[RMDB]
RNA sequence: GGGAACGACUCGAGUAGAGUCGAAAAGAUAUGGAAUCGGAUCCUAGCAUCGAUCUCGGAAACGAGGGAGCUACGAUCACGAUUCCUAAGUCAAACCAUACUUGGUAGUUCGCUACCAAGUAUGGAAGCAAAGUACAGUCUUCGGACUGUACUUUGCAAAAGAAACAACAACAACAAC
Reactivity to 2A3 in 0.01 (KOAc 150mM, MgCl2 10mM, bicine 150mM(pH8.5), 24C), signal-to-noise 1, nucleotides 027 to 126: g000a000u090a020u110g010g000a010a010u000c000g000g000a000u000c020c030u000a020g020c000a220u300c020g040a090u010c010u010c010g020g000a110a070a020c020g000a020g000g040g010a020g000c010u020a010c010g000a000u030c060a040c300g000a030u000u000c010c010u000a050a020g010u020c040a030a020a080c010c000a010u000a010c000u010u030g000g000u000a020g030u070u030c290g020c140u000a010c000c020a000a010g010u020a000u000g000g000a010a010
Reactivity to DMS in 0.01 (KOAc 150mM, MgCl2 10mM, bicine 150mM(pH8.5), 24C), signal-to-noise 2, nucleotides 027 to 126: g000a050u000a300u000g010g000a020a000u000c010g020g000a030u010c020c040u000a000g000c000a220u000c240g000a040u000c000u010c000g000g020a160a080a190c000g020a010g010g000g000a040g010c000u000a000c300g010a010u030c000a070c000g000a010u000u000c000c000u000a000a080g020u000c030a140a090a220c000c000a000u000a000c000u000u000g010g010u010a000g010u000u000c200g020c020u000a000c000c000a000a010g000u010a000u000g010g000a020a020